Structure probing data (DMS) for a 177-nucleotide construct.
Values cover nucleotides 27 to 126.

RNA sequence: GGGAACGACUCGAGUAGAGUCGAAAAAUGCCUUGUUCUUGAUGUUAGAGGAUUUGAAGAGUUGCAUGAAGAUAUUGUUGAAAUUCUCCGCAGAAGGGGUUGCACGGCAGAUCAAUCCAGACACUGGCUUGCUGAUGACAUUCGUGUCAUCAGCAAGAAAAGAAACAACAACAACAAC
Reactivity to DMS in 0.01 (KOAc 150mM, MgCl2 10mM, bicine 150mM(pH8.5), 24C), signal-to-noise 1, nucleotides 027 to 126: a110u000g020c000c010u010u000g030u010u000c020u000u000g000a210u010g010u000u000a070g010a010g020g010a060u000u000u000g010a090a100g000a060g010u010u020g010c100a100u000g020a070a060g000a180u010a030u000u000g000u000u010g000a050a060a050u000u000c000u000c000c170g010c070a080g000a180a020g000g010g000g010u000u000g020c070a050c040g000g030c070a060g000a030u010c070a070a090u000c050c000a070g000a110c170a050c080u000g000g030